This 177-nucleotide RNA was probed chemically with 2A3 and DMS. The reactions ran in a buffer of 150 mM KOAc, 10 mM MgCl2 and 150 mM bicine (pH 8.5), at 24 C. The data come from the RNA Mapping Database (RMDB), library OK2TST.
RNA sequence: GGGAACGACUCGAGUAGAGUCGAAAAAAGUCGGGUUGAUGACGUCGGCCGGGUCCAUGACUGCUCCUAGUGUGCCUGCCUCGACGCCUAGCGGACGGCUGUGUCGGGGGUGGUUUGGUUCGGACUCUACAUCAACAAUGUUCGCAUUGUUGAUGUAAAAAGAAACAACAACAACAAC
Reactivity to 2A3 in 0.01 (KOAc 150mM, MgCl2 10mM, bicine 150mM(pH8.5), 24C), signal-to-noise 3, nucleotides 027 to 126: a000a000g090u060c050g000g030g010u070u040g060a130u070g040a050c040g020u050c010g020g010c010c010g010g010g000u000c040c020a060u110g030a030c030u020g010c010u030c010c020u020a060g080u050g040u080g170c020c000u050g080c010c000u030c030g020a020c000g000c000c070u050a040g030c030g040g120a080c040g060g000c020u040g020u030g000u070c030g020g000g000g020g000u030g020g020u050u070u070g050g030u030u030c050g010g040a050c020u000c010
Reactivity to DMS in 0.01 (KOAc 150mM, MgCl2 10mM, bicine 150mM(pH8.5), 24C), signal-to-noise 8, nucleotides 027 to 126: a060a060g010u000c030g010g000g010u000u010g010a090u010g000a070c080g010u000c060g010g000c050c040g010g000g010u000c030c030a070u010g010a070c050u000g010c050u000c010c020u000a110g020u010g020u010g010c020c010u000g010c020c010u010c040g010a180c030g010c020c120u000a080g010c030g010g000a110c200g000g000c020u000g010u010g010u000c030g010g000g000g000g030u000g000g010u000u000u000g010g000u000u000c070g010g010a120c160u000c050